[RMDB]
RNA sequence: GGGAACGACUCGAGUAGAGUCGAAAAUGAGACGUUCAAGUCGAUGCAGGGCUUCGCCAAGAUGCCGCGCAUCGAGCCGUACAUCGAGAGGGUGUCGCUGGCGCGCGGUGAGGAAGCCGUGAUCUUCACCAACGGCUCCCGAAUCCUGUUCGGCGCGCUGUAAACUGCCAUUCGUGGCAGUUUACAGAAAAGAAACAACAACAACAAC
Reactivity to DMS in 0.01 (KOAc 150mM, MgCl2 10mM, bicine 150mM(pH8.5), 24C), signal-to-noise 2, nucleotides 027 to 156: u000g030a130g030a140c080g010u000u000c030a080a110g010u010c000g010a060u010g030c020a070g010g030g020c060u000u000c030g030c070c190a120a210g000a100u000g000c000c020g010c030g000c000a060u000c020g000a020g010c040c040g040u020a070c040a040u000c010g010a200g000a210g030g030g000u000g040u000c050g010c000u000g010g010c030g040c040g020c010g000g030u000g010a130g000g000a070a110g010c000c020g050u010g010a100u010c050u000u000c050a080c030c020a080a030c000g000g010c010u000c010c020c020g000a110a150u000c020c040u000g000u000u000c010g020g020c030g010c080g000
Reactivity to 2A3 in 0.01 (KOAc 150mM, MgCl2 10mM, bicine 150mM(pH8.5), 24C), signal-to-noise 3, nucleotides 027 to 156: u230g010a040g020a030c060g020u020u040c130a070a050g010u010c010g010a020u070g010c040a060g050g000g000c060u020u020c020g080c120c060a090a050g040a060u190g020c000c010g040c010g010c020a020u030c040g080a020g020c060c030g080u150a020c010a020u040c040g040a050g010a080g300g040g000u000g000u010c010g000c030u030g010g000c000g000c000g000c000g020g010u050g010a050g050g050a120a000g010c000c000g000u000g000a050u040c170u230u130c080a050c090c010a050a020c000g000g000c000u000c000c000c010g010a030a020u010c000c000u010g000u030u020c010g000g000c010g000c010g000